[RMDB]
RNA sequence: GGGAACGACUCGAGUAGAGUCGAAAAGGAUUCGCCAAUUACCACGCCGAAUUUCACGGCUUUGUCGAGCGCAACCAAUGGUUGGUCAGCGACAACAUCCCCGGUGGUGCGCCGAUACCGCAGGAGGCGUAGGCCAGGUGUUCGCACCUGGCCUACGAAAAGAAACAACAACAACAAC
Reactivity to 2A3 in 0.01 (KOAc 150mM, MgCl2 10mM, bicine 150mM(pH8.5), 24C), signal-to-noise 1, nucleotides 027 to 126: g020g010a050u020u120c040g050c090c020a060a010u190u120a120c070c110a040c130g000c000c010g040a050a050u120u130u140c130a080c070g000g000c020u020u070u040g010u000c030g040a030g000c030g010c000a000a050c000c010a070a190u170g020g020u020u020g000g050u120c010a060g100c040g060a020c010a000a000c030a110u100c020c000c020c000g000g030u080g030g060u010g000c030g000c000c010g000a100u040a080c010c030g050c040a020g040g060a030g010g010
Reactivity to DMS in 0.01 (KOAc 150mM, MgCl2 10mM, bicine 150mM(pH8.5), 24C), signal-to-noise 2, nucleotides 027 to 126: g000g010a140u000u010c030g000c060c050a120a090u000u000a090c100c060a120c100g010c100c000g020a080a100u000u010u010c090a140c030g000g020c060u000u000u020g020u000c000g010a130g020c020g010c000a020a060c000c010a090a180u000g010g030u000u010g010g000u000c040a110g020c050g010a080c120a040a080c260a050u000c040c030c020c070g000g030u000g050g000u000g030c030g000c020c040g010a060u000a040c110c030g020c080a040g010g020a130g000g010